[RMDB]
RNA sequence: GGGAACGACUCGAGUAGAGUCGAAAAACGAAACCCAAGGUGCAUGCCGAGGUGCGGUUGGCCUCGUUAACAAACCGCAAAAAAAUAGUCGCAAACGACGAAAACUACGCACUCGCAGCUUAAUAACAGUAGGGUCCCUACUUCGGUAGGGACCCAAUCCUAAUUUAUGAUUCGUCAUAAAUUAGGAAAAAGAAACAACAACAACAAC
Reactivity to DMS in 0.01 (KOAc 150mM, MgCl2 10mM, bicine 150mM(pH8.5), 24C), signal-to-noise 2, nucleotides 027 to 156: a140c080g020a110a150a200c040c010c010a080a270g040g040u010g000c020a080u000g010c050c030g010a090g000g000u000g030c000g040g000u010u020g020g000c020c010u000c130g000u000u000a060a040c090a050a070a060c020c010g000c030a020a010a030a070a060a080a190u000a050g000u000c010g070c080a050a040a130c060g010a040c020g000a060a030a050a070c010u000a050c010g000c010a040c050u000c020g020c040a080g020c050u000u010a040a140u000a040a100c080a090g010u000a160g000g030g040u000c000c010c030u000a010c000u000u010c200g070g020u000a030g020g030g030a000c020c000c000a010a010
Reactivity to 2A3 in 0.01 (KOAc 150mM, MgCl2 10mM, bicine 150mM(pH8.5), 24C), signal-to-noise 1, nucleotides 027 to 156: a000c040g030a120a000a000c010c000c000a040a020g070g050u060g000c060a090u040g080c020c060g010a000g000g010u010g010c030g020g050u000u000g060g040c060c040u030c010g100u080u130a010a000c040a030a000a000c090c000g070c060a000a000a050a010a000a000a200u170a020g030u030c000g000c140a120a130a120c080g030a000c010g040a080a020a000a020c050u160a040c030g020c000a010c030u030c050g120c030a060g040c070u180u100a120a050u150a300a000c060a060g140u220a110g020g020g000u000c000c020c010u010a000c010u050u030c100g020g040u000a000g040g000g000a000c000c000c000a000a000

About this RNA:
The data come from the RNA Mapping Database (RMDB), library M2RFPK. This 207-nucleotide RNA was probed chemically with DMS and 2A3. The 2A3 profile rests on 571 reads. For DMS, 3,448 sequencing reads were counted.